[RMDB]
RNA sequence: GGGAACGACUCGAGUAGAGUCGAAAAGAUAUGGACCCAUCUCUCCGAUAAGACCCGGUCGGAAACGACCGAGGUCUUUUGACGGAGGGAUGGGUCCUAAGUCAAAACACAUGGUUCGCCAUGUGAAGUAAGAGCAUACCUUCGGGUAUGCUCUUACAAAAGAAACAACAACAACAAC
Reactivity to DMS in 0.01 (KOAc 150mM, MgCl2 10mM, bicine 150mM(pH8.5), 24C), signal-to-noise 1, nucleotides 027 to 126: g010a020u000a250u000g020g000a030c000c000c000a000u020c020u000c000u000c000c020g040a180u010a020a010g010a010c000c000c020g010g010u000c000g030g000a040a030a060c000g000a010c000c000g000a060g090g010u010c000u000u000u000u000g020a140c250g000g010a040g030g020g000a010u010g010g030g000u000c000c010u000a000a050g020u010c030a160a150a110a230c010a030c020a020u040g000g020u000u020c270g020c000c000a020u000g010u000g000a040a150